RNA sequence: GGGAACGACUCGAGUAGAGUCGAAAAGAUAUGGAUGUAUGCCAUCUUCAUGGACGUUGAAAUCGGAAACGAUGGAGUCCAUAGAGAGGCGGAUACAUCCUAAGUCAAAGCCCAGUUCGCUGGGCAACGUAUCUGUCUUCUUCGGAAGACAGAUACGAAAAGAAACAACAACAACAAC
Reactivity to DMS in 0.01 (KOAc 150mM, MgCl2 10mM, bicine 150mM(pH8.5), 24C), signal-to-noise 3, nucleotides 027 to 126: g010a050u010a300u010g030g010a020u010g010u000a000u000g010c010c010a110u000c000u000u000c050a030u010g000g000a000c000g010u000u020g000a080a120a020u000c020g010g020a160a100a150c000g010a010u000g000g000a110g020u000c000c000a010u000a000g000a040g010a030g010g020c080g020g020a060u000a010c000a000u000c000c010u000a020a110g000u000c060a110a120a170g000c000c000c000a000g010u000u000c220g000c020u000g000g000g000c010a010a010
Reactivity to 2A3 in 0.01 (KOAc 150mM, MgCl2 10mM, bicine 150mM(pH8.5), 24C), signal-to-noise 3, nucleotides 027 to 126: g040a030u080a060u170g000g010a010u000g020u020a010u080g260c000c050a300u000c010u060u020c000a010u010g000g000a010c000g160u300u070g000a010a030a020u010c010g010g050a090a040a030c010g000a010u000g020g030a030g000u000c000c000a000u050a010g020a000g030a010g010g040c010g060g020a010u000a010c010a010u000c000c010u020a150a010g020u020c050a100a080a030g000c020c000c000a010g010u040u090c300g000c110u020g000g040g000c010a010a010